[RMDB]
RNA sequence: GGGAACGACUCGAGUAGAGUCGAAAACUUCUGGCGGAGAAGUCAUCACGACCGGCCGCAACUUCAAUGACCUGUUGAAUGGGACGUGGGAGUUCUUCUCUGAUUCAGUGGUCGUCGCUUCUCAGAACCUUGCAUCCGAUUUCGAUCGGAUGCAAGGAAAAGAAACAACAACAACAAC
Reactivity to DMS in 0.01 (KOAc 150mM, MgCl2 10mM, bicine 150mM(pH8.5), 24C), signal-to-noise 1, nucleotides 027 to 126: c040u000u030c040u000g020g000c050g010g000a080g000a010a060g000u000c080a070u010c050a040c000g010a220c010c000g000g000c300c050g000c080a030a110c050u000u010c100a070a090u000g000a100c200c140u010g030u020u000g000a120a130u010g010g020g030a080c060g000u000g000g000g000a140g010u010u000c010u000u000c010u000c070u000g020a070u000u010c060a020g040u010g000g000u000c030g020u000c080g000c120u000u000c020u000c010a170g000a160a100
Reactivity to 2A3 in 0.01 (KOAc 150mM, MgCl2 10mM, bicine 150mM(pH8.5), 24C), signal-to-noise 2, nucleotides 027 to 126: c000u060u040c000u030g040g020c030g000g000a020g000a020a040g050u020c020a050u040c030a030c040g040a060c010c020g030g050c050c020g000c010a020a030c030u080u040c050a080a300u090g150a240c030c030u050g030u050u160g070a100a090u150g050g020g070a070c030g000u000g000g000g040a200g050u080u010c000u090u010c020u020c030u020g050a210u180u090c020a020g030u040g030g000u040c020g050u040c010g020c070u030u010c020u010c030a030g060a130a110